Chemical mapping of a 177-nucleotide RNA with 2A3 and DMS. Conditions: 150 mM KOAc, 10 mM MgCl2 and 150 mM bicine (pH 8.5), 24 C. The data come from the RNA Mapping Database (RMDB), library M2PK50. 2A3 adducts were read by reverse transcription with SuperScript II with manganese. DMS adducts were read by reverse transcription with MarathonRT.

RNA sequence: GGGAACGACUCGAGUAGAGUCGAAAAUCUAGUCUAUUCGUAGACUAGAAAAGACUGCUGCCGGCAGGGUUGACUGCGCCGAGCAGAAACGGCAAAGGAAUAAAACUCUUGCUUUCGAGCAAGAGAAUAUACGGUAGAUGUUCGCAUCUACCGUAUAAAAAGAAACAACAACAACAAC
Reactivity to 2A3 in 0.01 (KOAc 150mM, MgCl2 10mM, bicine 150mM(pH8.5), 24C), signal-to-noise 2, nucleotides 027 to 126: u000c000u010a000g010u000c010u010a030u050u010c120g120u030a010g010a000c010u000a000g000a000a020a000a020g030a010c040u040g010c040u040g050c030c040g000g020c000a040g100g000g020u220u300g090a140c010u020g010c050g030c070c030g040a040g000c010a000g050a060a090a000c050g050g000c030a070a060a050g110g060a140a070u160a150a120a050a050c000u020c010u020u000g000c010u000u030u180c210g060a000g010c000a000a000g000a000g000a010a010
Reactivity to DMS in 0.01 (KOAc 150mM, MgCl2 10mM, bicine 150mM(pH8.5), 24C), signal-to-noise 3, nucleotides 027 to 126: u010c000u000a000g010u000c000u000a010u000u010c130g010u000a000g010a030c000u000a010g000a010a040a100a130g000a180c030u000g020c010u000g030c060c030g020g010c020a300g000g010g010u010u000g010a250c020u000g000c130g010c040c060g010a160g000c020a030g000a030a070a080c090g000g020c080a050a110a090g000g000a120a100u020a020a090a130a120c000u000c000u000u000g000c000u000u000u000c190g020a010g020c000a000a010g000a000g020a050a020